The data come from the RNA Mapping Database (RMDB), library OK1LIB. Structure probing data (2A3) for a 177-nucleotide construct. The RNA was probed in 150 mM KOAc, 10 mM MgCl2 and 150 mM bicine (pH 8.5) at 24 C.

[RMDB]
RNA sequence: GGGAACGACUCGAGUAGAGUCGAAAAAUGCGCGUAGAGCGUGUCGCCCUCGGCACGCAGUUGCACGCGGGCGAGGGGAAAGAGCGCCUUGCCGAACACGCUUUGCCCCUGUUGCUGCGGGUCGAACGAUGGAGCAGGAGUUCGCUCCUGCUCCAUCAAAAGAAACAACAACAACAAC
Reactivity to 2A3 in 0.01 (KOAc 150mM, MgCl2 10mM, bicine 150mM(pH8.5), 24C), signal-to-noise 1, nucleotides 027 to 126: a000u080g000c000g000c010g040u070a060g070a020g220c000g000u000g010u000c030g130c000c040c000u010c020g000g020c030a000c050g000c000a000g030u000u070g030c050a080c210g010c050g000g020g020c000g000a000g000g020g040g020a000a170a020g080a020g000c000g000c060c070u060u070g010c010c000g050a060a050c040a000c050g130c050u000u050u080g000c000c040c040c000u030g000u020u000g000c010u000g000c030g000g000g000u020c040g020a040a020c060